[RMDB]
RNA sequence: GGGAACGACUCGAGUAGAGUCGAAAAAACGCUGUCUGCAAAACAAUAAGUGCCAAACAAACGCGCACUGACUUCGCUCUCGCUGCCUAAGCAGUAAGACAGUCCGUCAGCCCGGGAUUGCUAUCGUCCCGGUUCCUGGCGUCAUUAAGAUAGCCACCAUAGUACUGAUGUUCGCAUCAGUACUAUGAAAAGAAACAACAACAACAAC
Reactivity to 2A3 in 0.01 (KOAc 150mM, MgCl2 10mM, bicine 150mM(pH8.5), 24C), signal-to-noise 6, nucleotides 027 to 156: a010a000c090g010c020u030g010u050c030u060g030c040a050a070a080a080c040a070a160u140a200a010g010u010g000c000c010a120a090a090c070a100a120a030c260g040c030g000c040a000c000u010g030a020c020u070u080c110g020c040u030c010u030c080g000c010u010g000c000c040u080a140a030g010c010a010g020u010a020a000g010a000c010a000g010u020c010c020g000u010c000a010g000c000c000c000g000g000g000a020u040u090g010c000u010a000u010c000g010u000c000c000c000g000g020u030u060c010c000u010g000g010c010g080u060c010a040u080u190a040a010g000a000u000a000g010c000c010a020c030
Reactivity to DMS in 0.01 (KOAc 150mM, MgCl2 10mM, bicine 150mM(pH8.5), 24C), signal-to-noise 4, nucleotides 027 to 156: a050a030c050g030c010u000g020u010c030u000g020c040a070a110a110a070c080a080a160u000a050a050g020u000g030c000c050a110a190a160c080a060a090a070c070g020c050g010c010a040c020u010g000a040c030u000u010c100g000c070u000c010u000c030g050c010u000g010c000c080u000a110a120g030c020a040g010u010a030a020g000a030c020a050g020u000c030c010g010u000c000a030g020c260c010c000g020g000g020a030u000u000g030c040u000a060u000c050g000u000c000c000c000g000g020u000u000c090c000u020g020g010c020g000u000c070a120u010u010a120a100g010a030u000a020g000c000c020a130c090
An RNA of 207 nucleotides, treated with 2A3 and DMS and read out base by base. DMS adducts were read by reverse transcription with MarathonRT. For DMS, 11,690 sequencing reads were counted. The RNA was probed in 150 mM KOAc, 10 mM MgCl2 and 150 mM bicine (pH 8.5) at 24 C.